RNA sequence: GGGAACGACUCGAGUAGAGUCGAAAACCGGAAUGGUUCCGCCGUGAUCGGGCCAUGCAAUAGUUGCCAACGACAACUAUGCGCCGGUUGCUCAGGCAGCGUAACGCUGCUUGAAAGACCACAUGAAUUAGCGCGACAUUGUUCGCAAUGUCGCGAACUGAAGUGAACACUUCGGUGUUCACUUCAGAAAAGAAACAACAACAACAAC
Reactivity to DMS in 0.01 (KOAc 150mM, MgCl2 10mM, bicine 150mM(pH8.5), 24C), signal-to-noise 1, nucleotides 027 to 156: c020c000g020g000a100a010u010g030g020u000u010c000c040g030c140c110g010u010g010a130u000c010g010g010g010c000c010a060u010g100c030a020a020u000a000g010u000u010g040c000c000a130a210c270g000a120c000a000a030c010u000a010u000g000c040g000c050c110g000g040u000u000g010c250u010c000a000g030g030c010a000g000c000g000u020a200a180c130g030c000u000g020c000u000u000g010a100a040a140g010a170c020c000a040c040a130u020g000a130a100u000u000a060g000c060g010c010g010a020c000a010u000u010g040u010u010c230g020c000a010a010u000g010u000c000g030c010g000a010a040
Reactivity to 2A3 in 0.01 (KOAc 150mM, MgCl2 10mM, bicine 150mM(pH8.5), 24C), signal-to-noise 3, nucleotides 027 to 156: c000c000g030g010a110a100u120g000g000u300u270c010c000g000c060c070g070u190g080a140u100c030g000g000g000c000c000a000u050g000c000a050a300u000a010g000u000u000g000c040c080a160a040c150g100a180c040a000a000c010u000a000u000g000c000g000c010c040g000g000u000u040g020c000u000c000a000g010g000c010a000g000c020g070u130a080a040c270g000c000u000g010c000u010u000g000a020a000a000g020a020c040c000a070c060a120u220g150a130a190u150u110a120g140c000g000c000g000a000c000a010u000u000g020u050u080c110g000c040a000a000u000g000u000c000g010c000g000a000a000
Conditions: 150 mM KOAc, 10 mM MgCl2 and 150 mM bicine (pH 8.5), 24 C.
This 207-nucleotide RNA was probed chemically with DMS and 2A3.
For 2A3 the reverse transcriptase was SuperScript II with manganese.
It was measured as part of the RMDB library M2RFPK.
For DMS, 1,797 sequencing reads were counted.